An RNA of 207 nucleotides, treated with 2A3 and read out base by base. 2A3 adducts were read by reverse transcription with SuperScript II with manganese. It was measured as part of the RMDB library M2RFOK. The RNA was probed in 150 mM KOAc, 10 mM MgCl2 and 150 mM bicine (pH 8.5) at 24 C.
RNA sequence: GGGAACGACUCGAGUAGAGUCGAAAAAUCCUCAGCUUCAUAAGCGUGAUGAUUGGGUGUUCAUGCUCCAUGCAUGACAUGUGCCUCCUUUGAACCUUGUUACGACCUUGGCACAUUACCCAUCUGAAAAAGACGUUCGCGUUCGCGCGAACGUCAACGGGUAUGAGAUCUUCGGAUCUCAUACCCGAAAAGAAACAACAACAACAAC
Reactivity to 2A3 in 0.01 (KOAc 150mM, MgCl2 10mM, bicine 150mM(pH8.5), 24C), signal-to-noise 1, nucleotides 027 to 156: a010u010c010c000u090c070a090g000c000u020u030c020a130u040a300a020g000c000g110u060g130a100u110g000a010u100u130g020g000g070u050g000u210u040c010a000u010g000c010u130c220c090a240u270g000c020a000u010g000a020c020a030u000g000u000g000c000c000u070c010c010u160u140u180g140a160a140c010c040u100u100g030u210u250a100c100g030a140c030c150u050u000g000g030c000a010c000a000u020u110a020c000c000c000a000u000c010u040g110a120a050a000a070a120g040a000c000g000u030u000c020g000c000g040u000u000c230g000c000g000c000g060a000a000c000g000u000c000a000a000